An RNA of 177 nucleotides, treated with DMS and 2A3 and read out base by base. The data come from the RNA Mapping Database (RMDB), library TTRDEL.
RNA sequence: GGGAACGACUCGAGUAGAGUCGAAAAGCGUCUUCGGACGCAAAAAAGAUAUGGAGAACCCCAUCAGGCCCUGUCGGAAACGACAGAGGCUGGGUUCUCCUAAGUCAAAAAGCUGGUUCGCCAGCAAGUGUCAAUACAUGUUCGCAUGUAUUGACACAAAAGAAACAACAACAACAAC
Reactivity to DMS in 0.01 (KOAc 150mM, MgCl2 10mM, bicine 150mM(pH8.5), 24C), signal-to-noise 2, nucleotides 027 to 126: g020c000g020u000c010u000u000c180g000g000a030c020g030c020a000a040a080a060a030a070g020a100u000a300u000g010g000a010g030a000a020c040c010c020c300a140u010c300a130g000g000c010c000c000u000g010u000c000g010g010a150a080a130c000g020a010c020a000g020a030g060g000c000u000g000g000g000u000u030c020u000c000c000u000a010a040g000u000c020a070a060a150a070a090g010c020u000g000g010u000u030c180g010c000c000a040g010c040a000a020
Reactivity to 2A3 in 0.01 (KOAc 150mM, MgCl2 10mM, bicine 150mM(pH8.5), 24C), signal-to-noise 1, nucleotides 027 to 126: g000c000g010u010c000u030u090c300g060g000a000c000g000c000a100a040a000a000a040a010g060a020u080a020u090g010g000a010g000a000a000c030c000c080c090a300u300c200a080g010g010c000c000c000u030g000u030c000g010g010a110a040a040c040g050a000c040a000g110a070g050g030c000u050g010g000g000u000u030c000u000c000c000u000a010a010g010u010c030a040a130a020a090a070g000c010u020g000g070u080u080c190g090c120c030a020g010c020a030a020